[RMDB]
RNA sequence: GGGAACGACUCGAGUAGAGUCGAAAACGUCAACGCCUAUAAAUUGACGACACCAUACGAGGCGUAUUGCGCGGACUGCGGCGGAAAAUCAUGCUACAGCCCUGUGGCCAUAGAAUCGGUGGUCGAACGUACCCUGCACUUUCGAGUGCAGGGUACGAAAAGAAACAACAACAACAAC
Reactivity to 2A3 in 0.01 (KOAc 150mM, MgCl2 10mM, bicine 150mM(pH8.5), 24C), signal-to-noise 2, nucleotides 027 to 126: c000g030u010c020a010a020c010g030c090c110u230a170u090a300a040a130u120u030g000a020c030g030a070c030a080c000c010a000u100a210c010g040a010g000g000c040g010u000a080u030u150g000c050g020c060g000g020a020c030u020g020c000g070g000c000g080g050a030a030a030a100u180c130a070u140g030c020u030a050c040a020g040c000c000c070u080g030u030g160g010c000c000a060u060a100g070a070a070u110c020g080g000u040g020g020u050c050g020a070a030
Reactivity to DMS in 0.01 (KOAc 150mM, MgCl2 10mM, bicine 150mM(pH8.5), 24C), signal-to-noise 1, nucleotides 027 to 126: c040g030u000c030a010a030c100g010c100c000u030a240u020a070a090a100u000u000g000a000c030g020a240c180a090c020c010a040u000a060c050g010a040g000g010c050g010u000a040u000u000g010c020g030c010g000g000a080c030u000g010c010g000g080c000g000g010a030a110a110a120u000c160a040u000g000c030u000a020c050a010g000c010c000c010u010g050u000g000g000c040c060a050u000a070g040a140a090u010c000g010g000u000g010g010u000c060g010a090a150
Structure probing data (2A3 and DMS) for a 177-nucleotide construct. Conditions: 150 mM KOAc, 10 mM MgCl2 and 150 mM bicine (pH 8.5), 24 C. High DMS reactivity at an A or C suggests that its Watson-Crick edge is free. For 2A3 the reverse transcriptase was SuperScript II with manganese. As a SHAPE reagent, 2A3 marks flexible, mostly unpaired nucleotides at the ribose 2'-OH. For DMS, 899 sequencing reads were counted.